Conditions: 150 mM KOAc, 10 mM MgCl2 and 150 mM bicine (pH 8.5), 24 C. The record gives the reactivity of an RNA of 207 nucleotides to 2A3 and DMS. DMS adducts were read by reverse transcription with MarathonRT. Source: RMDB library OK3TST, as collected in RNAgym. Values cover nucleotides 27 to 156.
[RMDB]
RNA sequence: GGGAACGACUCGAGUAGAGUCGAAAAAGAUGUGUGACUCAUGUGAGUACCCACAAGUGAUGAUAUUUCAGCAUAUCAUCCACACAUGCUGAAUGUGUGACUCAUGUGAGUACCCACAAGUGAUGAUAAGCCUCGUUAUCAUCCACACAUCACGAGGCGUAUGUACCUAGUUCGCUAGGUACAUACGAAAAGAAACAACAACAACAAC
Reactivity to 2A3 in 0.01 (KOAc 150mM, MgCl2 10mM, bicine 150mM(pH8.5), 24C), signal-to-noise 9, nucleotides 027 to 156: a000g020a010u010g000u000g000u000g020a020c010u010c050a030u010g000u000g010a010g000u010a020c000c020c020a070c040a030a040g030u000g020a000u000g000a000u000a030u020u170u240c110a040g020c020a010u000a000u010c000a000u000c020c000a000c000a000c000a000u030g000c030u080g080a060a020u010g000u000g000u000g010a010c010u010c050a030u020g000u000g020a000g000u010a020c000c020c000a050c020a040a080g050u060g100a090u050g000a000u020a020a010g040c040c030u050c030g050u010u000a010u030c010a030u010c010c000a000c000a000c000a010u010c010a000c030g020a020g040g010
Reactivity to DMS in 0.01 (KOAc 150mM, MgCl2 10mM, bicine 150mM(pH8.5), 24C), signal-to-noise 4, nucleotides 027 to 156: a070g010a020u000g020u000g030u020g010a130c070u010c040a080u010g040u000g010a010g010u000a040c010c020c070a110c190a070a110g030u000g020a030u000g010a030u000a020u010u000u020c220a160g000c190a050u000a020u000c010a020u000c010c040a050c000a030c010a020u000g010c190u000g000a190a030u000g030u000g010u000g010a100c050u010c030a090u000g040u000g010a020g000u000a040c000c010c000a090c050a030a080g000u000g020a100u000g010a050u000a030a090g030c050c050u010c080g010u010u000a040u000c010a100u000c020c020a050c020a030c000a020u000c010a130c020g010a070g020g030